[RMDB]
RNA sequence: GGGAACGACUCGAGUAGAGUCGAAAAACAUACGGGAGAUUCCUCGUCCUACUGACGUUCCUGACUAUGGAUUGCUGAAUGAUUUGUUAUGGUCAGAUCCUGCUGAUACUGAAAACGAUUGGGAAGAUAAUGAACGAGGUGUUUCUUUUGUUUUCAAGUAUUUAGGUCAUUUCGAUGACCUAAAUACAAAAGAAACAACAACAACAAC
Reactivity to DMS in 0.01 (KOAc 150mM, MgCl2 10mM, bicine 150mM(pH8.5), 24C), signal-to-noise 2, nucleotides 027 to 156: a040c040a090u000a090c050g000g010g040a060g000a140u000u000c010c010u000c000g020u000c030c020u020a170c040u000g010a090c040g000u000u010c000c000u000g040a120c100u010a100u000g010g020a060u000u000g050c040u000g000a120a160u020g010a100u000u000u000g010u000u000a100u020g030g020u000c020a090g010a080u000c050c040u000g020c060u010g000a110u000a200c010u020g010a090a050a090a080c070g010a150u010u000g010g000g000a080a040g010a100u000a060a090u010g000a020a060c000g000a070g000g040u010g010u000u010u000c020u010u010u010u000g000u010u010u010u010c020a150a300
Reactivity to 2A3 in 0.01 (KOAc 150mM, MgCl2 10mM, bicine 150mM(pH8.5), 24C), signal-to-noise 7, nucleotides 027 to 156: a000c060a040u230a080c050g020g030g010a050g020a060u110u090c000c000u000c020g010u020c010c020u050a100c050u060g080a020c030g050u030u000c010c000u040g050a070c030u070a060u160g040g030a060u090u100g040c040u060g080a100a160u080g070a160u060u100u110g140u120u180a130u160g070g000u020c010a010g010a090u030c000c010u050g040c030u030g020a040u060a180c040u080g070a040a040a060a060c050g080a100u050u050g020g030g000a030a040g020a080u110a110a080u180g040a040a020c030g010a030g000g010u010g010u000u040u020c000u020u080u040u040g060u030u030u040u100c050a100a070
Chemical mapping of a 207-nucleotide RNA with DMS and 2A3. Conditions: 150 mM KOAc, 10 mM MgCl2 and 150 mM bicine (pH 8.5), 24 C.